[RMDB]
RNA sequence: GGGAACGACUCGAGUAGAGUCGAAAAUUAGCAAAAGACAACCACCUUUCCCGCUGACAAUAGCGUUAUCCCUCUGCACUUCGGUAAUAUGAGGGCACAGUAAAUCCCGCAAGGAUGAGAAUGUGAUUAAACAGUUACAGCUUCGGCUGUAACUGAAGAUGAAUCAUCGGUUCGCCGAUGAUUCAUCAAAAGAAACAACAACAACAAC
Reactivity to DMS in 0.01 (KOAc 150mM, MgCl2 10mM, bicine 150mM(pH8.5), 24C), signal-to-noise 1, nucleotides 027 to 156: u040u000a060g030c040a070a130a120a050g060a110c050a140a220c040c020a140c040c030u000u000u000c000c010c000g000c010u000g020a050c060a010a110u000a070g010c010g070u000u000a080u000c020c000c000u000c000u010g000c080a080c040u000u000c150g040g020u000a080a160u000a110u000g010a060g000g030g100c030a050c050a100g000u000a120a180a170u000c000c000c030g050c150a060a150g050g010a100u020g000a120g000a120a170u000g030u000g000a130u000u000a040a190a130c000a000g030u000u000a050c000a000g000c000u000u000c300g070g000c000u000g000u000a000a000c000u010g010a000a140
Reactivity to 2A3 in 0.01 (KOAc 150mM, MgCl2 10mM, bicine 150mM(pH8.5), 24C), signal-to-noise 2, nucleotides 027 to 156: u040u010a000g020c060a000a040a030a090g110a100c130a020a090c030c020a050c030c050u030u070u010c000c010c010g000c100u070g030a090c110a130a130u130a180g050c020g050u100u110a110u090c000c010c000u010c000u010g010c020a010c030u040u090c230g070g000u050a060a040u160a110u280g000a020g000g000g010c000a000c000a000g000u010a020a060a020u010c030c000c000g100c090a000a050g000g020a050u020g010a000g010a010a030u020g000u000g030a030u110u160a130a140a040c000a000g000u000u000a010c000a000g000c000u050u050c120g080g000c000u000g000u000a000a000c000u000g000a000a000